This 207-nucleotide RNA was probed chemically with DMS.
Reactivities are given for positions 27 through 156.
For DMS, 1,655 sequencing reads were counted.
[RMDB]
RNA sequence: GGGAACGACUCGAGUAGAGUCGAAAAUGAUCACGACAUGUACACCGCUACUAUUCCAGCAUUCACCAAUGGAUUCAAGGCCGGCAAGAAGCAAUAUCACAGCGCAUAUCAGGUUUCUUUGGAGACCAAAAAGAAGCUGGCUAUGCCAUCCGCUAAGAAACAAGACAAGGUUCGCCUUGUCUUGUUUAAAAGAAACAACAACAACAAC
Reactivity to DMS in 0.01 (KOAc 150mM, MgCl2 10mM, bicine 150mM(pH8.5), 24C), signal-to-noise 2, nucleotides 027 to 156: u010g010a150u010c080a160c000g000a100c000a050u010g030u020a080c010a230c080c040g000c030u000a100c040u000a100u010u010c020c000a120g030c020a100u050u010c030a060c080c020a140a160u000g010g000a140u000u000c030a100a170g100g020c000c100g000g000c060a020a100g010a100a130g010c100a080a140u010a060u000c080a140c060a170g000c060g030c040a090u000a030u000c050a240g020g000u000u000u000c000u010u010u050g010g010a110g020a060c150c080a050a090a110a060a170g010a100a100g040c020u000g000g030c050u010a080u010g030c000c000a080u000c000c030g000c050u000a060a200g000